Chemical mapping of a 177-nucleotide RNA with DMS and 2A3.
[RMDB]
RNA sequence: GGGAACGACUCGAGUAGAGUCGAAAAACGGUAGUACGCUACCGAAACAUACAGUGUCGAUCAAAGUGGAGGCCCUCUCCGCGGCUUGGCGGGAAAGUGCAUCCAUUUUGUUUGUCUCUGUGUACAAAAGGCGAGUAAUUUUCGAAUUACUCGCCUUAAAAGAAACAACAACAACAAC
Reactivity to DMS in 0.01 (KOAc 150mM, MgCl2 10mM, bicine 150mM(pH8.5), 24C), signal-to-noise 2, nucleotides 027 to 126: a080c010g000g000u000a000g000u000a120c210g010c010u010a000c000c000g010a030a090a100c160a040u000a030c000a000g000u000g000u000c020g000a020u000c020a010a000a000g040u000g010g010a010g000g000c000c100c040u000c120u010c000c010g010c040g010g000c300u040u050g020g000c020g000g000g000a050a020a000g030u010g000c010a030u000c000c000a010u000u050u000u000g010u010u030u000g010u030c000u000c000u000g000u000g000u000a090c240a070a090
Reactivity to 2A3 in 0.01 (KOAc 150mM, MgCl2 10mM, bicine 150mM(pH8.5), 24C), signal-to-noise 3, nucleotides 027 to 126: a000c000g010g000u000a010g040u060a060c230g050c070u010a000c000c000g030a050a040a000c030a010u100a000c000a000g000u010g070u140c000g000a010u000c000a000a000a000g000u000g000g020a030g000g020c000c040c030u010c020u000c000c000g130c020g060g100c120u130u170g190g000c040g000g060g030a040a230a040g040u090g010c000a020u000c000c000a000u000u000u000u000g010u000u000u010g000u000c000u000c000u030g000u040g000u070a030c100a020a120

Conditions: 150 mM KOAc, 10 mM MgCl2 and 150 mM bicine (pH 8.5), 24 C. The 2A3 profile rests on 2,479 reads.